[RMDB]
RNA sequence: GGGAACGACUCGAGUAGAGUCGAAAAGAUAUGGACGAACACGAAAGCCAACAGCUCGGAAACGAGACAUGGCUAGUGUGUCGUCCUAAGUCAAACUGCCAACAACGCUUCGGCGUUGUUGGCAGAACGGAUUACAUUUCUUCGGAAAUGUAAUCCGAAAAGAAACAACAACAACAAC
Reactivity to DMS in 0.01 (KOAc 150mM, MgCl2 10mM, bicine 150mM(pH8.5), 24C), signal-to-noise 1, nucleotides 027 to 126: g000a020u010a300u020g010g000a050c010g020a100a010c000a010c000g000a190a110a180g030c000c010a000a130c190a180g020c000u000c010g030g000a090a120a190c010g000a010g000a040c050a110u000g000g010c010u000a190g020u020g010u010g000u000c000g010u000c000c000u000a000a040g030u000c020a120a140a210c000u010g000c000c000a000a000c010a000a000c000g020c000u000u020c300g010g000c000g000u000u000g040u000u000g000g000c000a000g020a010a070
Reactivity to 2A3 in 0.01 (KOAc 150mM, MgCl2 10mM, bicine 150mM(pH8.5), 24C), signal-to-noise 2, nucleotides 027 to 126: g020a010u040a020u190g010g000a020c020g030a110a020c000a000c010g140a300a240a020g000c000c010a030a040c040a170g030c000u000c020g010g020a040a070a040c010g000a000g040a030c030a100u120g000g020c030u080a080g010u000g010u020g220u000c010g000u000c010c010u010a030a020g010u010c020a010a070a060c010u020g000c040c000a010a010c000a000a010c020g000c020u080u130c300g130g000c000g000u020u010g020u000u010g000g060c030a000g000a000a010